[RMDB]
RNA sequence: GGGAACGACUCGAGUAGAGUCGAAAAAGUUAGGUUCGCUAUGGUGCAACUCUUUAAGGCAAUAACGAACUAAUUCUAAGCAAGUAAUGGAAAAAUGCCAGGGUCACUAUCUAGCCAUAAUAGUGCUGUAAGUGACUUAGAUUCGUCUAAGUCACAAGCGUGUUUCUAUCUUCGGAUAGAAACACGCAAAAGAAACAACAACAACAAC
Reactivity to 2A3 in 0.01 (KOAc 150mM, MgCl2 10mM, bicine 150mM(pH8.5), 24C), signal-to-noise 1, nucleotides 027 to 156: a000g150u140u090a050g050g070u030u020c000g000c120u050a020u000g060g050u150g000c020a050a130c070u040c090u130u250u230a170a170g010g110c020a010a010u040a020a040c040g040a000a000c010u040a010a040u210u050c130u100a000a000g120c030a110a000g080u200a120a040u070g000g170a050a050a100a000a050u180g010c020c010a040g000g000g070u020c000a000c000u020a080u030c040u020a040g030c000c000a000u050a040a110u000a080g120u040g040c020u030g010u080a200a080g000u000g000a000c000u000u000a000g000a040u020u020c070g050u000c140u000a000a000g000u000c000a000c000a000a000
The record gives the reactivity of an RNA of 207 nucleotides to 2A3. The 2A3 profile rests on 453 reads.